Structure probing data (DMS and 2A3) for a 207-nucleotide construct. For 2A3 the reverse transcriptase was SuperScript II with manganese.

RNA sequence: GGGAACGACUCGAGUAGAGUCGAAAAGAAGGACACCACAAGGAGUGGAGUGUGCGGCUUAAUUUGACUCAACGCGGGGCAACUUACCGGCUCUGAAGGAUGCCUGUGAGUGCAUGGCAUGAGGCAUGCGGCGGUGGUGCAUGGCCGUUUUAAAUGGGUAUACUAAGAGGUUCGCCUCUUAGUAUACAAAAGAAACAACAACAACAAC
Reactivity to DMS in 0.01 (KOAc 150mM, MgCl2 10mM, bicine 150mM(pH8.5), 24C), signal-to-noise 2, nucleotides 027 to 156: g010a110a090g020g010a120c030a090c030c030a070c050a090a150g010g020a210g050u020g010g020a110g020u000g000u000g030c030g000g010c000u000u010a000a120u010u000u020g000a090c030u000c000a050a100c050g020c020g010g000g000g010c020a050a050c040u000u000a080c010c040g010g000c020u000c040u010g010a080a090g030g000a070u000g020c010c010u010g040u000g000a040g030u000g010c020a070u010g000g000c040a080u000g010a130g030g020c040a040u000g030c030g010g020c010g010g020u000g020g010u010g000c010a110u010g010g020c000c030g020u010u010u000u020a300a100a130u010g000g020
Reactivity to 2A3 in 0.01 (KOAc 150mM, MgCl2 10mM, bicine 150mM(pH8.5), 24C), signal-to-noise 4, nucleotides 027 to 156: g070a030a030g050g010a010c010a010c040c030a050c050a070a090g110g030a070g050u070g040g020a070g040u100g030u080g030c020g030g030c010u050u060a000a060u130u120u070g040a050c020u030c070a030a030c040g010c010g040g000g030g000c010a040a030c030u040u070a030c030c020g030g020c020u010c030u100g060a070a040g090g010a020u110g010c000c010u040g010u030g010a030g020u050g010c030a040u060g040g010c030a030u070g050a020g030g030c040a010u060g010c030g030g000c000g010g020u020g010g020u010g020c020a010u020g040g010c010c020g020u050u040u050u100a070a120a050u130g080g000

The RNA was probed in 150 mM KOAc, 10 mM MgCl2 and 150 mM bicine (pH 8.5) at 24 C.